Structure probing data (2A3 and DMS) for a 177-nucleotide construct. 2A3 adducts were read by reverse transcription with SuperScript II with manganese. The data come from the RNA Mapping Database (RMDB), library RFMREP. For DMS, 3,197 sequencing reads were counted.
[RMDB]
RNA sequence: GGGAACGACUCGAGUAGAGUCGAAAAGCCUAAUGCUUCGGCAUUAGGCAAAAAGGGCUGACCGAAAGGUUCGGGUCCUACUACGGCGGGGAAGUUACCCAAAUCCAUGUCACUUCGGUGACAUGGAGCUUAUAUUUUCCUUCGGGAAAAUAUAAGCAAAAGAAACAACAACAACAAC
Reactivity to 2A3 in 0.01 (KOAc 150mM, MgCl2 10mM, bicine 150mM(pH8.5), 24C), signal-to-noise 5, nucleotides 027 to 126: g000c000c000u000a000a000u000g000c000u040u070c210g120g020c000a000u000u000a000g000g000c000a020a030a000a050a010g010g000g000c010u010g020a000c000c010g060a040a020a010g030g010u080u060c110g080g000g000u010c010c000u000a020c010u010a000c000g300g010c030g000g020g010g020a170a110g040u020u090a300c000c000c010a030a040a000u010c000c000a000u000g000u000c000a000c010u030u070c240g120g000u000g000a000c000a000u000g000g000a000
Reactivity to DMS in 0.01 (KOAc 150mM, MgCl2 10mM, bicine 150mM(pH8.5), 24C), signal-to-noise 2, nucleotides 027 to 126: g010c020c000u010a000a010u000g010c000u000u020c190g040g010c000a010u000u000a010g010g010c020a000a000a040a090a040g020g010g020c000u000g010a030c000c000g000a100a080a150g020g000u000u000c100g020g000g000u000c000c010u000a060c010u000a030c030g020g000c020g000g000g010g000a130a110g010u010u000a120c000c010c040a060a130a260u000c000c000a000u000g000u000c000a010c000u000u010c200g020g020u000g000a000c000a000u000g000g000a040